The record gives the reactivity of an RNA of 207 nucleotides to DMS and 2A3.

RNA sequence: GGGAACGACUCGAGUAGAGUCGAAAAGUGAUGCAGGUCGAGAGUGGACUAUCUCUCGUUAAUCCAGAGUCCAAGCCAAAAGUAACUGCGAACAACAUCGUUCCUUUCGCUCGUAAAGCUGCUGCGGUAGCCUAAGACCUCUAAACAGGUUCGAGCAGUCUGUAUAACGGUUCGCCGUUAUACAGACAAAAGAAACAACAACAACAAC
Reactivity to DMS in 0.01 (KOAc 150mM, MgCl2 10mM, bicine 150mM(pH8.5), 24C), signal-to-noise 2, nucleotides 027 to 156: g010u010g040a100u020g040c020a050g040g040u010c020g010a020g000a020g040u000g030g030a120c070u010a070u010c020u000c030u000c020g030u000u000a050a160u000c010c070a050g010a080g030u000c030c040a080a130g010c060c080a010a090a160a070g010u010a000a070c020u000g010c040g010a060a050c040a090a080c080a070u000c010g000u000u000c000c010u010u000u000c050g010c010u000c060g050u000a070a070a070g010c000u000g000c000u000g000c150g050g030u000a090g030c010c000u000a080a050g010a030c010c000u000c010u000a090a150a090c040a030g050g030u000u000c010g020a040g070c010a150
Reactivity to 2A3 in 0.01 (KOAc 150mM, MgCl2 10mM, bicine 150mM(pH8.5), 24C), signal-to-noise 6, nucleotides 027 to 156: g080u070g040a060u150g020c030a020g040g100u130c000g000a000g000a000g010u040g010g010a010c010u020a040u110c000u000c000u000c030g080u050u010a010a000u000c010c010a010g010a000g030u000c020c020a060a020g070c050c050a100a100a030a030g080u070a090a080c030u060g020c040g060a050a030c040a030a020c000a100u070c030g000u010u030c010c010u050u160u120c100g000c000u000c000g030u040a000a020a010g000c000u010g000c010u010g030c070g150g000u010a000g010c000c000u010a020a010g030a020c000c000u030c020u040a050a080a040c070a030g000g000u030u020c000g000a000g000c000a010
Background:
Conditions: 150 mM KOAc, 10 mM MgCl2 and 150 mM bicine (pH 8.5), 24 C. 2A3 adducts were read by reverse transcription with SuperScript II with manganese. The data come from the RNA Mapping Database (RMDB), library ARCHII.